[RMDB]
RNA sequence: GGGAACGACUCGAGUAGAGUCGAAAACUCUGGUGAGGCCCUAUCUAGUAUAGCAAUCCACCAAGCAGGUGAAUUCACACAAUUCAGGUUCUCAAAGAAAAUGCGCCCUGACUUGACAGGUAUGGUCGGAUAUGGUAGUCUUCGGACUACCAUAUCCAAAAGAAACAACAACAACAAC
Reactivity to 2A3 in 0.01 (KOAc 150mM, MgCl2 10mM, bicine 150mM(pH8.5), 24C), signal-to-noise 3, nucleotides 027 to 126: c010u020c030u020g110g060u070g050a050g060g000c010c030c000u000a050u020c020u040a050g110u140a080u040a070g060c060a020a040u000c010c010a030c000c000a070a030g080c060a080g030g070u020g040a090a040u110u070c040a030c000a000c000a140a020u050u040c010a010g050g000u130u030c020u040c000a120a140a020g140a070a120a010a030u130g040c010g040c010c000c000u040g030a030c010u090u130g060a030c020a050g000g080u080a060u080g090g000u060c060
Reactivity to DMS in 0.01 (KOAc 150mM, MgCl2 10mM, bicine 150mM(pH8.5), 24C), signal-to-noise 2, nucleotides 027 to 126: c020u010c180u040g030g030u040g000a170g000g000c220c180c040u000a040u010c030u080a080g010u000a010u000a070g060c070a060a200u000c060c000a010c050c020a090a110g000c140a040g000g060u030g010a030a010u010u000c050a030c290a150c140a030a040u000u000c010a060g000g040u000u050c050u000c080a040a080a080g040a100a070a000a080u000g000c040g000c300c000c000u020g000a050c080u000u000g010a040c030a050g010g010u010a080u000g000g000u030c130